The record gives the reactivity of an RNA of 207 nucleotides to DMS and 2A3.
RNA sequence: GGGAACGACUCGAGUAGAGUCGAAAAAGCAGGAGUACGCUCCUGCAUGGGUAGACGAAUUGACCCCAACUGAAGUUCAAUUCUAACGUUAAAAAGAGUUUUAUAUGACUGGACGUACGCGUCCAGAUGACGAUUUCAUUCUUCGGAAUGAAAUCAACUCGCUAUAUAUGUUCGCAUAUAUAGCGAGAAAAGAAACAACAACAACAAC
Reactivity to DMS in 0.01 (KOAc 150mM, MgCl2 10mM, bicine 150mM(pH8.5), 24C), signal-to-noise 1, nucleotides 027 to 156: a090g010c040a040g010g010a080g050u000a040c300g040c000u000c000c010u000g100c000a010u010g000g010g000u010a090g000a240c160g010a040a060u000u010g010a040c020c000c020c030a070a270c170u010g000a060a010g000u010u000c020a010a040u000u000c010u000a200a110c080g010u000u010a080a090a070a130a050g010a130g000u000u010u010u010a160u010a060u000g040a110c010u000g000g020a020c030g040u000a090c220g090c020g000u000c000c010a040g020a030u000g000a140c070g010a030u000u000u000c000a040u000u000c010u060u010c300g060g000a040a000u000g000a010a010a000u000c010a020a090
Reactivity to 2A3 in 0.01 (KOAc 150mM, MgCl2 10mM, bicine 150mM(pH8.5), 24C), signal-to-noise 5, nucleotides 027 to 156: a000g000c010a000g010g010a000g000u040a040c120g020c070u000c010c000u000g000c000a000u010g010g000g020u140a130g050a170c040g010a030a000u000u010g010a010c000c000c010c010a070a090c180u260g030a020a010g040u120u000c000a010a000u020u000c030u080a100a080c130g070u110u180a060a060a020a040a010g140a040g040u090u090u150u050a200u070a080u220g140a070c000u000g000g010a000c000g020u040a010c250g020c010g110u000c000c000a000g000a010u040g050a040c080g000a000u000u000u000c000a000u000u000c000u030u040c100g090g010a000a000u000g000a000a000a000u000c000a000a020
Annotation:
The DMS profile rests on 1,946 reads.